[RMDB]
The record gives the reactivity of an RNA of 207 nucleotides to 2A3. The reactions ran in a buffer of 150 mM KOAc, 10 mM MgCl2 and 150 mM bicine (pH 8.5), at 24 C. The 2A3 profile rests on 1,291 reads. Reactivities are rounded to 0.1 and cut off at 0 and 3.
RNA sequence: GGGAACGACUCGAGUAGAGUCGAAAAGGGGUCGCUACUUUGAUCUUUACUUGUCAGUCUGGACUGAAGCCUCCACGGUCCAAGGACUUGGAUUUAGUAAAGGGAGUAGCGACGGAGGCACCCAAAAGAGCACAAGGUCUUCGGACCUUGUGCUCAACCUCUAACACAUGUUCGCAUGUGUUAGAGGAAAAGAAACAACAACAACAAC
Reactivity to 2A3 in 0.01 (KOAc 150mM, MgCl2 10mM, bicine 150mM(pH8.5), 24C), signal-to-noise 2, nucleotides 027 to 156: g040g020g060g010u010c000g010c000u030a010c030u300u300u050g000a020u030c000u020u000u000a010c010u040u080g170u200c020a040g000u000c020u040g020g010a010c000u020g040a080a010g020c020c000u000c010c000a010c000g030g000u000c010c060a070a160g120g010a000c000u080u230g210g030a090u250u180u110a020g020u000a010a000a000g000g000g000a010g000u010a010g010c010g000a000c000g000g010a000g000g040c000a020c020c000c000a050a120a000a050g000a000g000c000a000c010a000a000g000g000u040c030u080u160c290g010g000a000c000c000u000u000g000u010g000c000u000c000a000a000